[RMDB]
RNA sequence: GGGAACGACUCGAGUAGAGUCGAAAAGAUAUGGAAUGUAUCUGUCGGUUACGAGCUCGAUAAGAUGGUAUCGGAAACGAUAUUCAUCUUUUGACGAGCGAGUAACCGACAGAUACAUUCCUAAGUCCAGACAUUUGAUGUUCGCAUCAAAUGUCUGAAAAGAAACAACAACAACAAC
Reactivity to DMS in 0.01 (KOAc 150mM, MgCl2 10mM, bicine 150mM(pH8.5), 24C), signal-to-noise 1, nucleotides 027 to 126: g000a080u020a300u010g010g000a000a000u000g010u000a000u000c000u010g000u000c000g000g000u000u000a000c010g000a300g020c000u000c010g010a200u010a010a020g000a000u020g000g000u000a000u000c000g000g000a170a110a200c000g010a000u000a010u000u010c000a000u000c000u000u020u000u000g040a200c110g000a010g030c010g000a300g000u000a000a020c000c000g020a000c010a000g000a000u000a000c000a000u000u000c000c000u000a010a050g000u000c050
The record gives the reactivity of an RNA of 177 nucleotides to DMS. For DMS the reverse transcriptase was MarathonRT. The RNA was probed in 150 mM KOAc, 10 mM MgCl2 and 150 mM bicine (pH 8.5) at 24 C. It was measured as part of the RMDB library TTRINS.